Structure probing data (DMS and 2A3) for a 177-nucleotide construct. The reactions ran in a buffer of 150 mM KOAc, 10 mM MgCl2 and 150 mM bicine (pH 8.5), at 24 C. For DMS, 3,109 sequencing reads were counted. 2A3 adducts were read by reverse transcription with SuperScript II with manganese. High 2A3 reactivity points to a flexible backbone, as in loops and unpaired stretches. The 2A3 profile rests on 2,548 reads.
[RMDB]
RNA sequence: GGGAACGACUCGAGUAGAGUCGAAAAUUAAACGGCGUAGAGAACCAAGCCUUGAAAAGCAGAAAGGGAGAGCUCAAGGCUUGGUUCUAGACUAGUGUCGAGUCGUUCCCACUCCCUACGCCAAAAACAACUAUUAAGGAUUCGUCCUUAAUAGUUGAAAAGAAACAACAACAACAAC
Reactivity to DMS in 0.01 (KOAc 150mM, MgCl2 10mM, bicine 150mM(pH8.5), 24C), signal-to-noise 3, nucleotides 027 to 126: u010u000a060a090a160c080g020g010c030g030u010a100g000a080g010a020a010c010c000a000a020g000c000c000u000u000g000a120a060a100a100g010c030a060g010a090a130a070g000g000g030a050g010a220g020c050u000c010a020a000g000g000c000u000u000g000g000u000u000c010u000a020g000a050c000u000a050g010u000g010u000c010g000a010g000u000c000g000u000u000c000c010c000a000c020u000c010c010c010u000a050c110g020c070c090a040a050a070a060a100
Reactivity to 2A3 in 0.01 (KOAc 150mM, MgCl2 10mM, bicine 150mM(pH8.5), 24C), signal-to-noise 2, nucleotides 027 to 126: u070u040a090a070a050c030g080g010c060g010u060a020g020a000g010a270a000c000c000a010a000g000c000c010u000u000g070a140a170a070a020g050c060a030g110a200a150a020g070g020g010a080g000a040g000c000u000c040a010a020g000g010c010u000u000g000g000u000u000c000u000a000g010a010c010u020a040g110u020g070u110c010g000a000g000u000c000g020u000u000c000c000c000a000c010u010c000c000c010u030a070c080g090c070c070a000a030a010a060a120